[RMDB]
RNA sequence: GGGAACGACUCGAGUAGAGUCGAAAAUCCAGACAUCCCGCUACAAGCGUACGCUGGUCAGGCCUGGUCCGGUAAAGGUGCUCUGAAUACCAGAGAUAUUUCUGGCGAAACCCACCUCAAGGUGGGUUAAAGAAAACUUUUUCGAAAGUUUUCUUUAAAAAGAAACAACAACAACAAC
Reactivity to 2A3 in 0.01 (KOAc 150mM, MgCl2 10mM, bicine 150mM(pH8.5), 24C), signal-to-noise 4, nucleotides 027 to 126: u020c000c000a000g060a030c040a060u050c060c010c000g000c010u050a060c070a160a030g030c020g090u070a030c020g000c040u040g040g000u070c050a060g000g070c010c030u060g030g030u010c000c020g000g020u070a050a080a060g060g020u060g020c020u000c010u060g060a080a030u100a130c010c000a010g010a000g020a020u050a060u230u190u070c040u030g000g010c020g010a050a040a060c000c000c010a010c010c010u140c160a110a050g020g000u000g010g000g010u000
Reactivity to DMS in 0.01 (KOAc 150mM, MgCl2 10mM, bicine 150mM(pH8.5), 24C), signal-to-noise 6, nucleotides 027 to 126: u030c010c010a120g010a120c110a050u010c040c020c010g000c080u030a090c120a110a080g010c050g010u020a050c110g000c030u010g000g000u010c090a090g000g010c030c020u000g000g010u000c020c010g000g000u020a040a100a090g000g010u010g010c020u010c040u010g010a150a100u030a180c060c000a010g010a030g000a180u010a080u010u020u000c010u000g010g010c150g010a100a070a090c000c010c000a010c000c000u020c200a110a110g020g030u000g000g000g010u000